[RMDB]
RNA sequence: GGGAACGACUCGAGUAGAGUCGAAAAGGACCGCCGGAGCCGUGGGAUGCUCCUCCCGAUUCCGUCCUACCCCACCCCCGAGAGGUCCCCCCAGGAAUGGCGGGACCCCACUCUGCAGGGUCCGCGUUCUAUAAAUGGUGUUCGCACCAUUUAUAGAAAAAGAAACAACAACAACAAC
Reactivity to DMS in 0.01 (KOAc 150mM, MgCl2 10mM, bicine 150mM(pH8.5), 24C), signal-to-noise 2, nucleotides 027 to 126: g000g010a090c060c070g010c120c040g010g000a040g010c070c100g010u000g000g010g000a140u010g010c090u000c060c020u000c030c030c010g010a100u000u000c060c040g000u010c020c010u000a180c010c000c000c030a240c020c010c010c000c030g020a090g020a080g020g010u000c010c020c000c020c010c030a060g000g020a100a060u010g020g000c270g000g000g000a020c000c010c010c040a070c120u010c060u010g060c090a090g000g000g020u000c030c010g020c040g020u000
Reactivity to 2A3 in 0.01 (KOAc 150mM, MgCl2 10mM, bicine 150mM(pH8.5), 24C), signal-to-noise 1, nucleotides 027 to 126: g030g000a020c000c030g080c060c070g050g000a000g030c050c030g120u090g000g000g070a090u140g060c040u030c020c020u000c040c020c020g030a020u080u030c050c020g050u010c020c020u060a140c020c000c000c000a050c020c030c020c010c000g020a040g010a030g080g010u010c030c010c000c000c000c000a000g050g070a070a040u050g000g050c000g000g040g000a010c000c000c010c000a040c010u170c000u110g050c050a060g080g000g000u020c040c020g020c010g010u030